[RMDB]
RNA sequence: GGGAACGACUCGAGUAGAGUCGAAAAUUGGGUAUUCUGCUUCUUGACCUGGUACCUCUAUUGCAGGGUACUGGUGUUUUCUUCGGUACUGGAUUCCGUUUGUAUGGAAUCUAAACCAUAGUUAUGACGAUUGCUCUUUCCCGUGCUGGAUCGAGUACCGUUAAAUUCAGUUCGCUGAAUUUAACGGAAAAGAAACAACAACAACAAC
Reactivity to 2A3 in 0.01 (KOAc 150mM, MgCl2 10mM, bicine 150mM(pH8.5), 24C), signal-to-noise 4, nucleotides 027 to 156: u150u070g020g000g000u040a050u060u020c060u110g080c040u060u030c020u110u210g050a010c000c010u000g020g000u010a000c030c000u070c050u140a270u230u300g120c180a070g000g020g000u000a000c010u000g000g000u100g040u110u110u040u030c050u040u080c080g010g010u020a110c080u070g010g000a010u000u010c010c000g060u080u130u180g240u090a130u190g000g000a000a000u010c000u010a080a030a010c000c020a020u040a020g060u120u080a090u200g030a060c030g000a030u010u070g000c000u010c000u020u020u000c000c010c000g010u010g000c010u050g000g010a030u000c030g000a010g050u000a020
Reactivity to DMS in 0.01 (KOAc 150mM, MgCl2 10mM, bicine 150mM(pH8.5), 24C), signal-to-noise 1, nucleotides 027 to 156: u000u000g010g000g020u000a080u000u000c040u010g040c050u010u000c040u000u010g010a040c020c020u000g000g010u000a020c020c000u000c030u000a200u000u020g050c210a050g020g000g020u000a020c000u000g050g000u000g010u000u000u000u000c070u000u000c040g050g040u000a140c130u000g030g000a030u000u000c020c000g010u000u000u000g000u020a100u000g000g020a030a020u000c020u010a030a080a100c040c040a110u000a120g020u010u000a080u000g020a140c060g010a060u000u000g000c020u000c070u000u000u000c000c050c030g050u000g000c010u000g020g020a300u000c080g020a130g010u000a100

About this RNA: This 207-nucleotide RNA was probed chemically with 2A3 and DMS. Conditions: 150 mM KOAc, 10 mM MgCl2 and 150 mM bicine (pH 8.5), 24 C. Source: RMDB library PDB130, as collected in RNAgym.